[RMDB]
The data come from the RNA Mapping Database (RMDB), library OK2TST. This 177-nucleotide RNA was probed chemically with DMS and 2A3. Reactivities are given for positions 27 through 126. The RNA was probed in 150 mM KOAc, 10 mM MgCl2 and 150 mM bicine (pH 8.5) at 24 C. For 2A3, 1,700 sequencing reads were counted.
RNA sequence: GGGAACGACUCGAGUAGAGUCGAAAAACGCACUUGGGUUUCGCGCCGAGAGGGUGCUGGUGGCGGUGGCGAGGGUCUUCUCAUGCGAUUCUCAUCGUACUCUUGCUUGCCAAAGGAGGGGAGGUUAGUUCAUUCGUAUCUUCGGAUACGAAUGAACAAAAGAAACAACAACAACAAC
Reactivity to DMS in 0.01 (KOAc 150mM, MgCl2 10mM, bicine 150mM(pH8.5), 24C), signal-to-noise 2, nucleotides 027 to 126: a090c120g000c070a060c050u010u000g010g000g000u000u000u010c120g010c080g000c030c020g010a160g010a110g010g000g020u020g000c040u000g010g010u010g010g000c080g010g000u010g030g020c050g000a050g000g030g020u010c080u010u000c100u000c110a160u010g020c030g000a040u000u000c120u020c140a120u010c070g010u000a050c030u000c040u010u000g010c070u010u000g030c070c020a040a120a090g000g020a070g000g010g000g010a080g010g000u010u010a180
Reactivity to 2A3 in 0.01 (KOAc 150mM, MgCl2 10mM, bicine 150mM(pH8.5), 24C), signal-to-noise 2, nucleotides 027 to 126: a000c030g000c010a040c060u060u040g160g000g000u060u110u100c090g010c050g010c050c010g090a070g020a050g180g010g030u080g090c080u080g020g060u040g050g000c060g040g110u040g040g000c040g020a060g020g000g020u030c040u140u000c020u060c020a050u120g010c010g020a000u080u040c060u040c110a130u040c030g030u060a070c030u010c010u030u040g040c040u080u160g010c020c050a080a050a060g070g000a070g030g030g010g000a030g000g040u080u130a030